[RMDB]
RNA sequence: GGGAACGACUCGAGUAGAGUCGAAAACGACCGCUCGGAUGGGCCGCUUCCGGCAAGAGGGGCCGAAAGUGUGAAGGGAGAGACCGCUCCGAGAGUUGGGAGAAGAAAGAGAGCGAAUGUGUCCGGACUGAUAUUGAUACUUCGGUAUCAAUAUCAGAAAAGAAACAACAACAACAAC
Reactivity to 2A3 in 0.01 (KOAc 150mM, MgCl2 10mM, bicine 150mM(pH8.5), 24C), signal-to-noise 3, nucleotides 027 to 126: c020g050a060c020c000g040c010u010c000g120g000a070u050g050g040g020c010c020g020c010u010u020c000c000g010g000c000a030a040g090a040g040g050g060g000c000c010g020a040a050a020g050u070g030u090g090a070a040g050g000g010a060g000a010g020a050c030c030g030c040u000c010c020g050a040g000a010g060u100u210g050g010g010a050g020a050a020g040a020a050a010g060a000g010a000g020c040g020a100a070u090g040u010g040u050c020c000g000g020a020
Reactivity to DMS in 0.01 (KOAc 150mM, MgCl2 10mM, bicine 150mM(pH8.5), 24C), signal-to-noise 2, nucleotides 027 to 126: c060g000a120c040c030g010c050u000c020g000g010a080u000g010g000g020c040c050g000c040u010u010c030c010g000g020c040a060a070g010a070g000g000g000g000c030c020g000a040a020a040g010u000g010u010g000a080a100g010g010g010a060g000a060g020a060c090c040g000c070u010c020c050g000a080g020a060g020u000u000g000g000g000a080g020a100a090g010a060a100a050g010a080g010a050g000c040g010a080a070u000g010u000g000u000c010c020g010g010a300